[RMDB]
RNA sequence: GGGAACGACUCGAGUAGAGUCGAAAAGAUAUGGAUCCCACGCUUCAUGGGACGUUGAAAUCGGAAACGAUGGAGUCCCAUAGAAGGAAGUGGGAUCCUAAGUCAAAGAACGGCUUCGGCCGUUCAACAAACGGUUAGGCUUCGGCCUAACCGUUUGAAAAGAAACAACAACAACAAC
Reactivity to DMS in 0.01 (KOAc 150mM, MgCl2 10mM, bicine 150mM(pH8.5), 24C), signal-to-noise 1, nucleotides 027 to 126: g010a020u000a300u000g010g010a010u000c000c010c000a040c010g010c000u000u010c000a040u000g010g040g020a010c000g010u010u000g000a130a080a020u010c000g000g000a150a110a230c000g020a020u000g000g000a140g020u000c000c010c000a020u000a030g000a030a010g000g020a000a110g030u000g010g000g000a020u000c000c000u000a010a080g000u000c010a080a120a180g000a010a010c000g020g010c010u000u000c280g060g020c000c000g000u000u010c020a070a140